RNA sequence: GGGAACGACUCGAGUAGAGUCGAAAAGAUAUGGACGUGAUGCUCUGCGAACGUGGACAUCGGAAACGAUGUUCCACGGAGGUAUAGAGCCCACGUCCUAAGUCAAACCUAGAGGUUCGCCUCUAGGCACGGGAUGGUAGUUCGCUACCAUCCCGUGAAAAGAAACAACAACAACAAC
Reactivity to DMS in 0.01 (KOAc 150mM, MgCl2 10mM, bicine 150mM(pH8.5), 24C), signal-to-noise 2, nucleotides 027 to 126: g000a070u000a150u010g000g010a010c000g010u000g010a090u000g010c000u000c000u010g020c180g010a060a150c020g030u000g000g010a040c010a010u000c000g030g010a080a040a100c000g040a010u000g000u010u000c000c010a010c010g040g010a030g030g040u010a110u000a000g010a010g000c020c300c000a010c000g020u000c000c000u000a000a080g000u000c000a110a110a180c000c010u000a000g000a010g040g010u000u000c290g020c000c010u010c000u000a000g010g000
Reactivity to 2A3 in 0.01 (KOAc 150mM, MgCl2 10mM, bicine 150mM(pH8.5), 24C), signal-to-noise 3, nucleotides 027 to 126: g030a000u040a030u080g000g010a000c010g010u010g000a070u220g020c000u000c010u060g210c220g140a150a050c000g000u000g000g000a000c040a010u000c000g000g000a030a010a000c010g010a010u000g010u300u080c000c000a000c000g020g010a010g150g140u280a300u130a300g030a000g000c000c000c010a000c000g030u020c010c000u000a000a000g010u010c010a100a000a090c020c000u010a000g000a020g090g060u160u210c300g110c080c000u000c030u000a010g010g000

Notes:
The record gives the reactivity of an RNA of 177 nucleotides to DMS and 2A3. DMS adducts were read by reverse transcription with MarathonRT. For 2A3, 5,254 sequencing reads were counted. The DMS profile rests on 2,445 reads. Reactivities are given for positions 27 through 126.